[RMDB]
RNA sequence: GGGAACGACUCGAGUAGAGUCGAAAACUCCACGCUGGGUAAUGGACGACGGCGGCGUGUGGCGAACAGGGAUACCGUUAGUCAGUGUCUGGAACAUCCCAAGGGGCGGCGGAGCUAGCACCCCGACAAAACGGGCACAAGUUCGCUUGUGCCCGAAGCUUCAGAAAGAGUUCGCUCUUUCUGAAGCAAAAGAAACAACAACAACAAC
Reactivity to 2A3 in 0.01 (KOAc 150mM, MgCl2 10mM, bicine 150mM(pH8.5), 24C), signal-to-noise 1, nucleotides 027 to 156: c010u010c000c000a010c010g000c010u010g010g000g080u120a110a090u090g040g010a060c090g010a010c000g030g110c040g000g040c000g010u140g040u080g060g060c070g000a050a050c130a070g010g030g030a040u060a120c020c000g000u050u040a130g180u030c030a000g030u010g020u040c020u050g010g010a050a030c030a140u000c000c010c010a060a140g030g000g000g010c060g020g010c060g100g070a040g100c020u030a030g010c000a020c000c000c000c000g060a000c010a010a060a000a010c050g000g000g000c000a030c010a010a000g050u070u100c130g000c110u020u020g000u000g030c010c000c000g000a000a000